This 177-nucleotide RNA was probed chemically with DMS and 2A3. Reactivities are given for positions 27 through 126.

RNA sequence: GGGAACGACUCGAGUAGAGUCGAAAAUCGCUCUGUGGUGCUGGCUGCAACCCAAGAGGUGACUUUACCUUCAAUUGGCGCAUACCAGUCAAUACGGUCACCUUGUUCAUUGAGCUGAGGGAUCGCCUAGAAUGGAGCUGUUCGCAGCUCCAUUCUAAAAAGAAACAACAACAACAAC
Reactivity to DMS in 0.01 (KOAc 150mM, MgCl2 10mM, bicine 150mM(pH8.5), 24C), signal-to-noise 1, nucleotides 027 to 126: u010c170g010c010u010c000u000g010u010g000g000u000g000c000u020g000g030c000u010g010c080a090a150c000c010c030a140a110g020a000g000g000u000g010a040c080u000u000u000a080c110c050u020u010c130a130a080u000u020g000g030c070g000c200a120u010a080c130c110a110g010u000c040a050a050u010a100c200g000g020u000c000a020c010c000u020u000g000u000u000c070a110u000u010g000a020g050c020u010g000a060g000g000g050a140u000c100g050c100c090
Reactivity to 2A3 in 0.01 (KOAc 150mM, MgCl2 10mM, bicine 150mM(pH8.5), 24C), signal-to-noise 1, nucleotides 027 to 126: u040c000g100c000u060c010u000g070u050g020g020u040g020c010u010g050g000c020u030g000c020a100a130c000c000c020a020a010g010a000g080g000u000g020a000c070u140u190u200a100c010c000u060u180c050a080a080u060u070g010g000c070g040c050a010u120a200c070c050a030g030u080c000a010a010u090a020c050g060g000u020c030a030c070c000u030u030g010u080u050c170a180u090u200g080a030g040c020u030g090a050g000g090g050a080u050c040g040c010c000
In probing experiments dimethyl sulfate is read out at A N1 and C N3, which are open when not base-paired. For 2A3 the reverse transcriptase was SuperScript II with manganese. The RNA was probed in 150 mM KOAc, 10 mM MgCl2 and 150 mM bicine (pH 8.5) at 24 C.